[RMDB]
RNA sequence: GGGAACGACUCGAGUAGAGUCGAAAAAUUGGAACUAGGGAACCCCUCCGGUCUUGUCCAACCUCUGUUUCGGCAGAGGAUACCGUGCUCCCAAGCUGUAAGGCUUGGGGCCCGAGAGAAGUCGCUCUCUCUCGCCCUUUACGUCCUCUCAGGCAUAGUGUAAUAAACCGUUCGCGGUUUAUUACACAAAAGAAACAACAACAACAAC
Reactivity to 2A3 in 0.01 (KOAc 150mM, MgCl2 10mM, bicine 150mM(pH8.5), 24C), signal-to-noise 1, nucleotides 027 to 156: a010u070u030g040g000a010a020c040u010a140g000g030g060a070a090c020c000c010c010u060c050c020g000g020u050c020u040u100g020u060c010c020a030a030c030c000u000c060u040g040u050u110u050c130g140g000c000a000g000a000g010g000a000u010a000c010c020g050u080g010c000u060c000c000c000a000a000g010c000u020g090u300a270a120g020g010c000u010u010g010g000g000g000c010c070c000g020a020g000a000g020a070a010g050u110c030g040c030u020c010u000c000u020c040u020c040g080c020c000c040u040u130u090a060c060g010u000c000c000u000c020u050c020a000g050g000c070a110u180a100
This 207-nucleotide RNA was probed chemically with 2A3.
The reactions ran in a buffer of 150 mM KOAc, 10 mM MgCl2 and 150 mM bicine (pH 8.5), at 24 C.
It was measured as part of the RMDB library VIROID.